[RMDB]
RNA sequence: GGGAACGACUCGAGUAGAGUCGAAAAGCUGCUCAGGGUUGCGGACAAGGUCCACGUGGAUACCAUGAAGGUUGUGCAGAGCAGGGAGAACAUCAAUGUUGUGGACAAUGUCACCGAAGUAGGUGGCAAGGACAAUGCGAGGAGCCUUGUCACCGAGAUCGUCAUUCUAGUUCGCUAGAAUGACGAUAAAAGAAACAACAACAACAAC
Reactivity to DMS in 0.01 (KOAc 150mM, MgCl2 10mM, bicine 150mM(pH8.5), 24C), signal-to-noise 2, nucleotides 027 to 156: g030c030u000g010c020u000c040a130g020g010g020u000u010g000c050g000g030a120c040a110a130g050g000u000c000c010a060c100g140u030g030g020a150u000a050c040c040a090u010g010a090a150g000g010u030u010g030u000g000c080a140g010a070g040c070a120g000g010g020a150g000a060a070c060a100u000c050a070a210u000g010u010u000g010u000g000g040a100c040a060a090u000g000u000c020a150c000c020g000a090a120g020u000a190g000g010u000g000g000c000a000a010g000g000a050c050a070a090u000g030c060g010a220g040g020a180g000c000c020u030u000g020u000c000a000c010c010g000a090g010
Reactivity to 2A3 in 0.01 (KOAc 150mM, MgCl2 10mM, bicine 150mM(pH8.5), 24C), signal-to-noise 4, nucleotides 027 to 156: g040c030u050g000c020u020c060a030g040g060g010u040u080g020c040g040g010a020c030a070a100g120g000u030c010c010a020c060g040u100g060g050a080u030a130c010c010a040u120g150a100a030g070g010u030u020g030u100g050c040a000g010a030g030c020a030g000g040g010a070g020a020a020c040a060u090c020a050a140u140g040u090u070g010u060g010g010a020c060a070a090u130g020u050c020a040c090c020g010a060a020g020u100a050g000g000u000g000g000c000a000a000g010g010a030c080a160a110u240g030c070g040a080g060g050a090g040c000c000u000u000g010u010c000a000c000c000g000a010g000